[RMDB]
RNA sequence: GGGAACGACUCGAGUAGAGUCGAAAAUGUGUGCUCGAGAGCCUCCCUGUCCGACAGAGCUUUUAGAUCUUCUGAUCUUUCCCUGGAGGAUAUCGCUUAUGCUUCAAGCGUUUCUCGGAAUAAUUAACAAACCUGGUGAAUUCGUUCACCAGGUUUGAAAAGAAACAACAACAACAAC
Reactivity to DMS in 0.01 (KOAc 150mM, MgCl2 10mM, bicine 150mM(pH8.5), 24C), signal-to-noise 2, nucleotides 027 to 126: u000g000u020g010u000g000c030u000c020g010a060g000a130g000c050c030u010c020c040c020u000g000u000c020c030g010a100c060a060g020a080g010c300u010u000u000u000a010g010a000u000c000u020u030c300u030g000a000u010c000u010u000u000c030c010c000u010g010g000a220g000g000a030u000a020u000c030g000c030u000u000a020u000g020c130u020u020c090a010a020g010c010g010u000u000u000c000u000c020g000g010a110a110u000a090a120u000u010a030a180